[RMDB]
RNA sequence: GGGAACGACUCGAGUAGAGUCGAAAAAUUUGAGCCUCUCCCAAUUCUCUAAUAACCUCACUGGAGGUUAACCAGGCAGGGCUCAAUAUACCUCUUCAGCAGUAGCAUAGUUUCUGAUUGAGUGUGGACUAACAGUAGUUUUCGAACUACUGUUAGUAAAAGAAACAACAACAACAAC
Reactivity to 2A3 in 0.01 (KOAc 150mM, MgCl2 10mM, bicine 150mM(pH8.5), 24C), signal-to-noise 9, nucleotides 027 to 126: a000u050u020u040g000a010g000c000c010u160c030u050c040c020c030a020a080u190u040c060u000c010u050a080a140u050a080a060c010c000u030c050a170c220u220g280g010a000g000g000u010u000a020a020c040c020a030g040g000c030a010g010g000g000c000u000c010a000a000u040a000u020a010c000c010u020c010u050u030c020a030g000c020a040g040u090a020g040c040a080u050a130g070u050u080u000c030u020g110a220u120u050g030a050g060u110g040u070g060g050
Reactivity to DMS in 0.01 (KOAc 150mM, MgCl2 10mM, bicine 150mM(pH8.5), 24C), signal-to-noise 9, nucleotides 027 to 126: a080u010u010u000g010a020g010c030c010u010c150u000c060c010c030a100a130u020u020c060u020c050u010a100a140u010a020a010c000c000u000c010a230c290u040g020g010a010g010g010u000u000a020a090c160c200a050g010g010c280a090g010g000g020c000u000c010a010a020u020a080u010a080c040c010u010c040u000u010c040a050g000c090a060g000u010a050g020c090a080u020a090g010u000u010u010c010u000g000a080u000u010g010a040g010u010g020u010g000g000